[RMDB]
RNA sequence: GGGAACGACUCGAGUAGAGUCGAAAACAAACUCACGGCAACCUUGAAGGAUAGUGUAAAAAUCUGAUUUUGAAUCAAUCCAAACAAGGAUCGGAUAUGUCAUUGCUAUCAAUUGGCCAACAGUUCAAGCAUUUAUCGUCUUCGGACGAUAAAUGCUAAAAGAAACAACAACAACAAC
Reactivity to DMS in 0.01 (KOAc 150mM, MgCl2 10mM, bicine 150mM(pH8.5), 24C), signal-to-noise 1, nucleotides 027 to 126: c130a100a150a040c010u000c030a150c300g010g030c070a090a130c030c030u040u000g000a100a300g000g010a060u030a070g030u000g000u010a000a070a000a020a000u000c100u000g040a010u000u000u000u000g000a120a100u010c040a040a030u060c070c030a030a190a230c040a030a000g000g000a150u000c040g000g000a030u000a000u000g000u000c160a070u000u000g030c040u010a010u000c030a100a100u000u000g040g000c010c040a150a300c280a010g000u000u030c150a160
Reactivity to 2A3 in 0.01 (KOAc 150mM, MgCl2 10mM, bicine 150mM(pH8.5), 24C), signal-to-noise 1, nucleotides 027 to 126: c020a000a130a020c020u000c000a040c030g000g000c020a000a120c000c060u000u050g030a100a000g000g020a010u020a020g020u000g030u060a090a090a000a000a010u090c180u140g150a180u040u050u020u100g090a080a020u040c030a000a070u000c100c090a130a060a090c030a100a000g000g020a000u100c040g000g000a000u010a080u140g030u070c050a040u000u270g000c010u000a010u080c000a030a110u110u120g120g020c000c000a000a000c000a020g010u060u050c060a030